RNA sequence: GGGAACGACUCGAGUAGAGUCGAAAAAGGCCUCAUAAUCUUUAUGUUACAAAGCACCCCAAGCUUAUGGUAGGGGGACAGGACCAUUGAGCUCUUAGGAUCUGUCAGCAACAAUUGACUGGCCUGGAUAGGCCAGGUUCUUCGGAACCUGGCCUAUAAAAGAAACAACAACAACAAC
Reactivity to 2A3 in 0.01 (KOAc 150mM, MgCl2 10mM, bicine 150mM(pH8.5), 24C), signal-to-noise 1, nucleotides 027 to 126: a000g000g050c020c000u040c100a060u130a100a070u230c060u080u120u050a180u190g020u050u060a080c020a070a100a000g010c000a210c050c020c020c000a020a110g020c010u300u120a120u200g000g090u070a050g050g030g000g020g030a020c010a010g040g000a020c010c020a050u000u130g080a020g000c000u000c010u100u200a040g010g010a030u010c040u000g050u060c050a020g050c010a060a100c010a000a300u060u060g080a020c060u020g010g040c020c000u000g000g060
Reactivity to DMS in 0.01 (KOAc 150mM, MgCl2 10mM, bicine 150mM(pH8.5), 24C), signal-to-noise 2, nucleotides 027 to 126: a080g010g000c010c020u010c150a080u000a110a110u000c020u000u000u010a020u020g010u000u000a070c070a080a060a110g000c080a240c070c010c000c040a110a110g000c020u020u020a040u020g000g010u000a140g000g010g000g000g010a060c050a040g000g000a030c030c010a080u000u010g000a040g000c030u000c080u010u020a080g000g010a030u010c070u000g000u000c040a160g000c070a040a050c100a070a080u010u000g000a050c040u010g000g000c000c020u000g010g000
Conditions: 150 mM KOAc, 10 mM MgCl2 and 150 mM bicine (pH 8.5), 24 C. The record gives the reactivity of an RNA of 177 nucleotides to 2A3 and DMS. Reactivities are given for positions 27 through 126.